[RMDB]
RNA sequence: GGGAACGACUCGAGUAGAGUCGAAAAUCGGUGCGGCAACAUGUUUCGUUGCGCAGCGCCGCUUCGCUAAUUGACACGUCGAGGCGGUCACAGAUGUCCAGCAGUUCUUGGGCCGACACGUAGGGAAAAAGGCUCAUUUGUUCGCAAAUGAGCCUUUAAAAGAAACAACAACAACAAC
Reactivity to 2A3 in 0.01 (KOAc 150mM, MgCl2 10mM, bicine 150mM(pH8.5), 24C), signal-to-noise 2, nucleotides 027 to 126: u120c030g000g000u050g000c000g070g000c010a000a000c030a090u160g140u100u110u090c100g020u040u010g010c090g020c120a050g020c000g000c000c000g000c000u030u030c020g000c020u070a120a120u140u210g070a150c060a020c140g200u210c020g060a040g020g010c010g000g080u040c010a030c040a080g050a050u070g090u070c000c040a040g030c040a030g050u040u040c010u050u020g000g040g000c040c020g050a040c010a010c080g130u170a160g000g030g000a070a040
Reactivity to DMS in 0.01 (KOAc 150mM, MgCl2 10mM, bicine 150mM(pH8.5), 24C), signal-to-noise 2, nucleotides 027 to 126: u020c030g000g060u000g020c020g000g000c000a050a000c020a090u030g010u010u040u000c050g010u000u000g000c030g010c030a060g030c050g010c000c000g020c070u000u010c060g000c050u030a160a100u100u030g000a130c180a120c160g030u020c000g020a040g000g050c000g010g010u010c110a100c080a060g000a060u000g000u010c070c040a090g000c060a080g000u000u010c010u020u010g000g000g000c050c060g000a080c070a040c080g010u000a100g000g020g010a020a110